Description
Chemical mapping of a 177-nucleotide RNA with 2A3 and DMS. As a SHAPE reagent, 2A3 marks flexible, mostly unpaired nucleotides at the ribose 2'-OH. The reactions ran in a buffer of 150 mM KOAc, 10 mM MgCl2 and 150 mM bicine (pH 8.5), at 24 C. 2A3 adducts were read by reverse transcription with SuperScript II with manganese. For DMS, 3,317 sequencing reads were counted. The data come from the RNA Mapping Database (RMDB), library M2PK50.
RNA sequence: GGGAACGACUCGAGUAGAGUCGAAAAGAAGGCUCCUUCGGGAGCCUUCAAACUGGUGUCCCGACCAGGCUGGAUGUCAAUCCCUGAAGUGAUAGAUCGGGAAAAGUUGCAACUUCGGUUGCAACAAGAUAUAUGUGGGGUUCGCCCCACAUAUAUCAAAAGAAACAACAACAACAAC
Reactivity to 2A3 in 0.01 (KOAc 150mM, MgCl2 10mM, bicine 150mM(pH8.5), 24C), signal-to-noise 1, nucleotides 027 to 126: g000a020a000g020g000c020u020c010c000u060u070c300g030g010g000a000g000c010c010u020u000c000a000a000a000c000u000g050g000u010g070u000c000c000c010g020a010c010c000a010g010g060c050u120g000g050a160u170g140u190c040a090a040u090c050c040c010u110g080a120a030g070u030g090a060u100a220g120a040u070c020g000g010g080a000a020a020a090g020u000u000g000c000a010a010c000u040u150c250g060g000u020u000g000c000a000a000c000a010a020
Reactivity to DMS in 0.01 (KOAc 150mM, MgCl2 10mM, bicine 150mM(pH8.5), 24C), signal-to-noise 3, nucleotides 027 to 126: g000a030a010g010g000c000u000c010c000u000u010c190g030g020g020a040g000c010c000u000u010c010a010a090a120c040u000g000g000u000g000u000c000c010c000g000a090c000c020a010g010g010c100u000g010g010a030u000g000u010c090a100a130u000c020c000c030u020g020a080a080g000u010g000a090u010a110g010a050u000c040g000g020g000a050a070a080a140g000u000u000g010c000a010a000c000u000u030c190g010g010u000u000g010c000a000a000c010a050a070